RNA sequence: GGGAACGACUCGAGUAGAGUCGAAAAGGUGGAAUGACAUCGUGUUUACUGAGAUUAAAACCAUUAAGUAGAGGAGUAUUCAACAGUUUGUUGAUUUUAGAUGACAAACCACUCCAUGGAACAAGACCGCACAUGAAGAUUUCGAUCUUCAUGUGCGAAAAGAAACAACAACAACAAC
Reactivity to 2A3 in 0.01 (KOAc 150mM, MgCl2 10mM, bicine 150mM(pH8.5), 24C), signal-to-noise 1, nucleotides 027 to 126: g030g010u010g000g060a020a090u050g010a040c020a000u010c020g000u020g140u110u110u040a070c040u000g010a030g010a190u180u130a090a000a090a000c070c000a010u080u090a050a030g030u030a010g030a010g160g000a050g080u060a090u060u030c000a010a000c010a020g120u080u160u150g000u060u160g000a010u000u090u010u060a060g000a080u050g000a000c010a000a030a000c030c000a010c020u050c010c010a050u020g090g020a100a040c050a070a020g040a050c050
Reactivity to DMS in 0.01 (KOAc 150mM, MgCl2 10mM, bicine 150mM(pH8.5), 24C), signal-to-noise 2, nucleotides 027 to 126: g000g040u000g000g020a020a250u010g030a100c060a020u000c010g000u000g000u000u020u000a010c040u010g000a120g000a080u000u000a020a110a130a100c280c120a010u010u020a140a120g010u000a030g000a040g000g010a140g000u000a010u010u000c040a000a000c070a130g040u000u000u020g020u000u010g000a050u010u020u050u010a050g010a010u000g000a060c000a000a010a280c010c050a010c000u000c020c080a090u010g010g020a100a080c120a020a160g000a130c220